The record gives the reactivity of an RNA of 207 nucleotides to 2A3.
RNA sequence: GGGAACGACUCGAGUAGAGUCGAAAACAUCCGGUUCGCCGGAUGAAAAACCGUAGGAGUAUGCUAAUCUACCCUUGGAUUUAUAAUUUCGAAAGAGAUUAUUGUCAGGAAGUAGACAACAUACUCCUAAACGGAAAAACCUCCGUUCGCGGAGGAAGACAUCGUCUAACUUCGGUUAGACGAUGUCAAAAGAAACAACAACAACAAC
Reactivity to 2A3 in 0.01 (KOAc 150mM, MgCl2 10mM, bicine 150mM(pH8.5), 24C), signal-to-noise 1, nucleotides 027 to 156: c000a000u000c000c000g020g050u050u000c230g070c130c000g020g010a000u000g000a000a000a000a070a000c000c000g000u010a010g020g040a000g010u000a000u020g010c050u150a140a160u050c000u000a000c000c050c030u040u010g150g030a020u040u300u020a000u030a000a000u010u000u010c030g020a140a180a030g010a000g000a010u000u000a000u000u050g020u040c010a000g000g040a300a090g000u010a010g000a000c010a000a000c000a000u010a020c000u000c000c000u000a000a000a000c020g000g040a000a020a070a000a070c010c030u020c000c000g000u030u040c210g000c000g160g020a010g000g010a000a010
The data come from the RNA Mapping Database (RMDB), library RNAMAK. The reactions ran in a buffer of 150 mM KOAc, 10 mM MgCl2 and 150 mM bicine (pH 8.5), at 24 C. For 2A3 the reverse transcriptase was SuperScript II with manganese.